About this RNA
Source: RMDB library OK3TST, as collected in RNAgym. An RNA of 207 nucleotides, treated with 2A3 and read out base by base. The reactions ran in a buffer of 150 mM KOAc, 10 mM MgCl2 and 150 mM bicine (pH 8.5), at 24 C.

RNA sequence: GGGAACGACUCGAGUAGAGUCGAAAAAGUAACUCUCAGGAUGGGAAAGCAUGCGUCUCCUUAAUUACUAGUUGAGAUCAAGCGUACGGAAACCAUCCUUGGGCAUGCGAAAGGAUGGGGAUGGGAAAGCAUGCAUACCCCAUCCGAAACGUACGGAACCACAAUAGCCGUUCGCGGCUAUUGUGGUAAAAGAAACAACAACAACAAC
Reactivity to 2A3 in 0.01 (KOAc 150mM, MgCl2 10mM, bicine 150mM(pH8.5), 24C), signal-to-noise 1, nucleotides 027 to 156: a000g180u100a110a110c020u020c040u040c140a050g000g000a000u050g000g000g000a180a000a000g000c020a020u020g000c000g040u000c020u070c040c000u090u130a060a180u060u110a170c100u040a090g180u100u090g090a020g020a050u120c050a010a050g040c010g040u110a090c040g000g000a060a000a000c010c000a000u000c010c000u010u010g000g060g040c050a020u120g030c040g100a120a020a000g000g000a000u000g000g000g000g030a110u130g000g040g010a090a020a070g010c000a000u020g050c000a010u110a130c000c000c000c000a000u000c000c000g000a000a000a000c080g020u070a040c140g070g090a050